[RMDB]
RNA sequence: GGGAACGACUCGAGUAGAGUCGAAAAUCUAUGACAGAACAAGUAGGUAGAGGAGAUGAAUUUAGCAUACUUACUUUUUUGAACUGCUGGAAAUUCAAGUAAUAUUCUUAUAUGUACAGAAACAAACAGAAUGGGAUCCCGUGCCUAUAACUGUGAACAUCAUACCCUGAUUCGUCAGGGUAUGAUGAAAAGAAACAACAACAACAAC
Reactivity to DMS in 0.01 (KOAc 150mM, MgCl2 10mM, bicine 150mM(pH8.5), 24C), signal-to-noise 2, nucleotides 027 to 156: u000c070u000a040u020g010a240c050a140g000a090a100c070a080a070g010u010a020g030g020u010a070g000a160g010g010a110g050a170u000g010a100a090u000u010u000a110g020c080a190u010a090c050u020u000a050c060u000u000u000u010u000u000g020a050a090c090u000g030c020u000g040g000a080a040a070u010u010c030a000a200g000u010a050a130u010a090u000u010c040u010u000a080u000a070u010g000u000a190c020a100g010a070a050a050c050a070a060a220c060a040g040a070a060u010g010g000g000a140u000c100c010c000g000u010g030c030c040u010a070u000a010a130c070u000g020u000g010a080a130
Reactivity to 2A3 in 0.01 (KOAc 150mM, MgCl2 10mM, bicine 150mM(pH8.5), 24C), signal-to-noise 3, nucleotides 027 to 156: u030c010u030a100u110g030a050c010a020g080a170a070c040a090a030g050u050a020g030g040u030a030g040a120g130g110a070g020a060u080g050a090a120u060u170u120a080g030c000a040u010a070c010u120u000a020c000u140u130u080u030u100u170g110a100a040c020u040g030c030u070g020g030a050a110a040u100u030c040a070a000g010u040a050a160u050a090u180u050c030u050u200a150u040a030u300g020u030a010c040a030g140a070a130a020c030a060a090a000c020a040g050a070a040u030g010g000g030a000u020c000c030c060g040u100g000c000c040u090a100u020a100a040c020u020g010u020g100a050a040
The data come from the RNA Mapping Database (RMDB), library OK3TST. The record gives the reactivity of an RNA of 207 nucleotides to DMS and 2A3. For 2A3 the reverse transcriptase was SuperScript II with manganese. The DMS profile rests on 2,766 reads. The RNA was probed in 150 mM KOAc, 10 mM MgCl2 and 150 mM bicine (pH 8.5) at 24 C. DMS adducts were read by reverse transcription with MarathonRT.